[RMDB]
RNA sequence: GGGAACGACUCGAGUAGAGUCGAAAACUUUUCAGUAAUACUCCAGUGAAUGAGGCUAAGAGUACCAUUUUUGUUCUUAUAAAAGAAUUUUUUUGGACAUGAAUACAAAGAUGUCAGGUUACCAAAUCAUUUGCUAGUAGAUCCUAACAAUAUCACACGAUUUAUCCGGAUUCGUCCGGAUAAAUCGAAAAGAAACAACAACAACAAC
Reactivity to 2A3 in 0.01 (KOAc 150mM, MgCl2 10mM, bicine 150mM(pH8.5), 24C), signal-to-noise 1, nucleotides 027 to 156: c050u110u140u150u180c090a040g010u100a000a110u000a170c010u010c020c020a000g010u000g050a040a060u000g020a050g060g020c120u110a220a000g090a090g110u000a050c000c000a040u040u030u060u000u120g000u000u000c020u000u240a230u130a260a120a050a030g050a010a160u110u080u000u000u020u050u090g050g000a000c010a020u110g060a130a020u180a090c040a000a100a060g060a010u050g050u030c020a110g060g040u000u090a040c030c030a060a030a000u020c000a040u000u030u030g000c000u000a010g000u010a010g020a070u010c000c000u010a040a140c040a050a030u150a130u230c060a050c000a000

This 207-nucleotide RNA was probed chemically with 2A3. The reactions ran in a buffer of 150 mM KOAc, 10 mM MgCl2 and 150 mM bicine (pH 8.5), at 24 C. The 2A3 profile rests on 408 reads. Values are in units of 0.01, from 0 to 300, in steps of 10.